[RMDB]
RNA sequence: GGGAACGACUCGAGUAGAGUCGAAAAGGUCACCGGGUCGAUGUAGAACUUCGUCAGCUCUUCCAGCUUGUGGCCGGUCCCACCUUCUUUGUAGGCCCGGGGGUCUACCAGGUGCGAGUAGAUCUUGGUGUCCUCGACCUUCGGCCACAUCUGCUCCGAGGCAUUCAAAUUUCGAUUUGAAUGCCUCAAAAGAAACAACAACAACAAC
Reactivity to 2A3 in 0.01 (KOAc 150mM, MgCl2 10mM, bicine 150mM(pH8.5), 24C), signal-to-noise 1, nucleotides 027 to 156: g040g010u020c020a060c060c010g010g010g040u000c060g010a080u080g040u170a010g050a020a030c060u190u090c120g080u080c060a050g030c000u040c000u160u000c090c060a080g040c060u020u030g000u000g000g000c000c000g050g100u020c030c000c000a030c000c010u270u190c010u050u060u160g070u140a020g000g000c010c000c050g000g070g000g000g000u000c050u060a020c010c000a030g030g060u000g090c100g020a130g110u110a050g080a060u090c010u000u010g040g020u010g100u030c000c040u030c060g000a000c000c000u010u010c000g010g000c010c000a010c000a020u020c030u110g040c020u070c110c090